[RMDB]
This 207-nucleotide RNA was probed chemically with 2A3. 2A3 adducts were read by reverse transcription with SuperScript II with manganese. It was measured as part of the RMDB library M2RFOK. The RNA was probed in 150 mM KOAc, 10 mM MgCl2 and 150 mM bicine (pH 8.5) at 24 C. The 2A3 profile rests on 840 reads.
RNA sequence: GGGAACGACUCGAGUAGAGUCGAAAAUGGGCUACCAGUAAGCGCAAAAUGAUACAGGACGAAAAAAACAUAAUUCGAGAUUUUUCAGGAUGGAUUUUUUUAGGUAUCUAUCAAAACUAUUCUGAUGCAACGUAGAGCACGUUCGCGUGCUCUACAACUUGCAAGGAUUGUUCGCAAUCCUUGCAAGAAAAGAAACAACAACAACAAC
Reactivity to 2A3 in 0.01 (KOAc 150mM, MgCl2 10mM, bicine 150mM(pH8.5), 24C), signal-to-noise 1, nucleotides 027 to 156: u030g030g020g000c030u050a020c060c000a040g010u060a060a000g050c010g000c080a040a050a000a130u090g000a010u130a100c110a050g090g040a020c030g050a130a010a000a020a060a020a000c020a030u140a040a020u150u020c050g010a010g030a300u040u030u060u120u030c000a000g000g000a000u000g050g030a050u010u000u000u000u140u080u000a040g000g050u110a070u220c010u010a000u010c010a000a020a020a000c000u000a010u000u030c010u020g010a030u030g040c030a030a140c070g000u000a000g000a000g000c000a000c030g020u040u010c080g010c000g040u000g000c000u000c000u000a000c000a000a000